Structure probing data (DMS and 2A3) for a 177-nucleotide construct. The reactions ran in a buffer of 150 mM KOAc, 10 mM MgCl2 and 150 mM bicine (pH 8.5), at 24 C. The 2A3 profile rests on 10,274 reads. DMS adducts were read by reverse transcription with MarathonRT.
RNA sequence: GGGAACGACUCGAGUAGAGUCGAAAAGAUAUGGAAACACUCGGCUAGCUGCGUGUCGGAAACGACACGGCAGCUUGGACCCGAGGUGUUUCCUAAGUCAAAAGCGAGAUCGUUCGCGAUCUCGCAAGUAUUAGCCUUACUUCGGUAAGGCUAAUACAAAAGAAACAACAACAACAAC
Reactivity to DMS in 0.01 (KOAc 150mM, MgCl2 10mM, bicine 150mM(pH8.5), 24C), signal-to-noise 5, nucleotides 027 to 126: g010a030u000a300u000g000g000a020a010a020c000a030c000u000c000g010g000c050u000a030g010c000u000g010c010g010u000g000u000c000g000g000a090a080a230c000g010a010c000a010c000g030g060c020a000g000c000u000u000g000g010a150c300c010c010g000a020g020g010u010g010u000u000u000c000c000u000a020a060g000u010c040a100a140a150a120g000c010g000a020g000a010u000c000g020u000u010c260g030c020g000a000u000c000u010c000g020c000a020a020
Reactivity to 2A3 in 0.01 (KOAc 150mM, MgCl2 10mM, bicine 150mM(pH8.5), 24C), signal-to-noise 3, nucleotides 027 to 126: g010a010u070a020u150g010g010a020a000a000c010a010c000u020c010g030g030c120u150a060g000c010u020g000c000g010u020g020u000c000g000g030a090a060a030c020g000a000c010a030c010g070g020c000a000g000c010u010u050g020g070a040c020c020c000g020a040g070g050u040g000u010u000u000c000c000u000a070a010g050u020c030a020a010a110a060g000c000g020a000g000a010u010c020g020u140u140c260g020c020g170a010u000c010u000c000g000c000a000a000